[RMDB]
RNA sequence: GGGAACGACUCGAGUAGAGUCGAAAAUUGUGUUUUACAUAGGAAACAAGAAUGGGAACUUGUUUUUCUUAAUGAAAGGAGGCAUCACAUGAGCUAAGAAAGGCAUUGUGCCCACACCAGUGAGCUCGGGAAAAGAGCUUCCAGGGAUGUCAAAGGACGGAGGUAGCUAAUUCGUUAGCUACCUCCGAAAAGAAACAACAACAACAAC
Reactivity to 2A3 in 0.01 (KOAc 150mM, MgCl2 10mM, bicine 150mM(pH8.5), 24C), signal-to-noise 1, nucleotides 027 to 156: u040u030g030u000g000u030u060u090u060a060c030a060u150a030g010g010a010a010a010c020a010a030g000a110a060u210g040g010g030a000a020c000u000u000g020u020u030u040u050u100c030u050u100a110a080u140g050a030a000a060g100g010a060g020g010c030a030u020c010a010c010a260u070g100a000g120c090u070a060a020g080a170a090a050g080g050c020a040u040u070g000u000g080c000c020c000a010c010a020c000c030a020g000u000g110a030g010c000u000c000g000g000g000a000a220a100a100g010a020g000c000u000u000c000c000a030g010g010g000a030u030g090u090c020a300a000a010g190g000a070